Structure probing data (DMS and 2A3) for a 207-nucleotide construct. The RNA was probed in 150 mM KOAc, 10 mM MgCl2 and 150 mM bicine (pH 8.5) at 24 C. For DMS, 2,281 sequencing reads were counted. It was measured as part of the RMDB library M2RFOK. For DMS the reverse transcriptase was MarathonRT. Reactivities are given for positions 27 through 156. For 2A3 the reverse transcriptase was SuperScript II with manganese.
RNA sequence: GGGAACGACUCGAGUAGAGUCGAAAAUCAGAAUCAGGCCGGAGUGUUUAGCGCUCCGUAAACACGGUAGUACAUCCAGCCGGUAGCCUGGUUCCUUGCAUUGAGUGAUGUACGGAGUUUAUAGAGCAAAAGAAAGACCUGUUCGCAGGUCUUUCAACUAUCCCUAUACCUUCGGGUAUAGGGAUAGAAAAGAAACAACAACAACAAC
Reactivity to DMS in 0.01 (KOAc 150mM, MgCl2 10mM, bicine 150mM(pH8.5), 24C), signal-to-noise 1, nucleotides 027 to 156: u000c050a060g000a060a040u000c010a020g000g020c000c040g000g010a100g060u000g000u000u000u000a210g020c050g010c010u000c000c000g040u000a020a030a080c030a080c070g030g010u000a050g040u000a080c030a060u000c010c020a160g010c020c020g090g000u000a050g020c050c020u000g010g000u000u000c020c030u020u010g010c090a150u000u000g000a190g000u000g030a030u000g000u010a070c020g000g010a170g050u000u000u000a130u000a140g010a170g000c060a060a070a130a170g000a040a020a020g000a060c000c010u000g030u000u010c300g020c020a010g000g000u070c000u030u000u000c000a050a180
Reactivity to 2A3 in 0.01 (KOAc 150mM, MgCl2 10mM, bicine 150mM(pH8.5), 24C), signal-to-noise 2, nucleotides 027 to 156: u100c010a020g000a010a030u000c000a000g010g000c010c010g010g000a010g000u080g030u100u110u250a150g040c020g010c020u000c000c000g000u040a010a030a010c150a010c060g000g000u030a030g060u040a050c010a020u000c030c040a010g080c010c020g000g030u030a020g000c000c000u000g000g000u000u030c010c030u050u090g030c020a100u040u160g010a030g050u090g020a000u000g010u000a000c020g040g010a110g020u080u200u110a140u190a070g110a030g020c040a060a030a040a100g000a000a000a000g000a010c000c000u010g000u040u060c190g030c110a010g000g000u020c000u010u000u000c000a000a000